This 177-nucleotide RNA was probed chemically with DMS and 2A3. The data come from the RNA Mapping Database (RMDB), library TTRDES. The RNA was probed in 150 mM KOAc, 10 mM MgCl2 and 150 mM bicine (pH 8.5) at 24 C. DMS adducts were read by reverse transcription with MarathonRT. As a SHAPE reagent, 2A3 marks flexible, mostly unpaired nucleotides at the ribose 2'-OH. The 2A3 profile rests on 30,364 reads.
RNA sequence: GGGAACGACUCGAGUAGAGUCGAAAAGAUAUGGAUCGGGUAAGGGAGCCUCUACUCGGAAACGAGUAGAAGGCAUCGAUCUUACAUGAUCCUAAGUCAAAGGUUUCCGAGUUCGCUCGGAAACCAAGUACGAUAUAAAGUUCGCUUUAUAUCGUACAAAAGAAACAACAACAACAAC
Reactivity to DMS in 0.01 (KOAc 150mM, MgCl2 10mM, bicine 150mM(pH8.5), 24C), signal-to-noise 4, nucleotides 027 to 126: g000a010u000a020u000g010g000a010u000c000g000g000g010u000a010a010g010g010g000a080g020c010c000u000c000u000a010c000u000c010g020g000a000a000a010c000g010a010g000u000a010g000a040a030g030g030c000a080u000c260g010a050u000c000u000u000a010c010a060u010g010a010u000c000c000u000a000a080g000u000c010a110a110a180g010g000u000u000u010c000c000g000a010g010u010u010c300g020c000u000c000g000g000a010a000a010c000c000a010a030
Reactivity to 2A3 in 0.01 (KOAc 150mM, MgCl2 10mM, bicine 150mM(pH8.5), 24C), signal-to-noise 5, nucleotides 027 to 126: g000a000u020a000u050g000g000a000u000c020g130g130g010u010a010a000g020g070g060a060g000c000c000u000c000u000a000c000u000c000g000g010a030a000a000c000g000a000g000u010a000g010a030a030g000g000c010a000u190c060g060a090u000c000u010u000a010c010a060u160g000a000u000c000c000u000a010a000g000u010c050a140a080a160g000g000u000u010u000c000c000g000a000g000u150u230c300g040c140u000c000g000g010a010a000a000c000c000a010a020